[RMDB]
RNA sequence: GGGAACGACUCGAGUAGAGUCGAAAACACAGUUCUCCGAUUCCAAUUUUCCGCAAGGAAUGUCAUCGCGACCGCCCCGCCGGUGUCUGGACACCCGCAGUACGUCGCAGCUUCGAUCCCGUAUCGGCAAUCUCCUACAGUUCGCUGUAGGAGAUUGAAAAGAAACAACAACAACAAC
Reactivity to DMS in 0.01 (KOAc 150mM, MgCl2 10mM, bicine 150mM(pH8.5), 24C), signal-to-noise 2, nucleotides 027 to 126: c100a090c160a100g010u000u000c020u000c010c010g020a120u020u000c040c070a110a090u000u010u000u010c010c010g000c260a080a140g010g010a040a040u020g020u000c110a050u000c080g020c050g040a060c080c060g020c080c080c020c060g050c060c120g020g010u000g020u000c080u000g030g010a060c050a020c040c030c120g020c010a090g020u010a090c150g010u000c030g030c050a080g020c070u010u010c080g010a070u000c020c020c010g000u000a070u010c050g000g010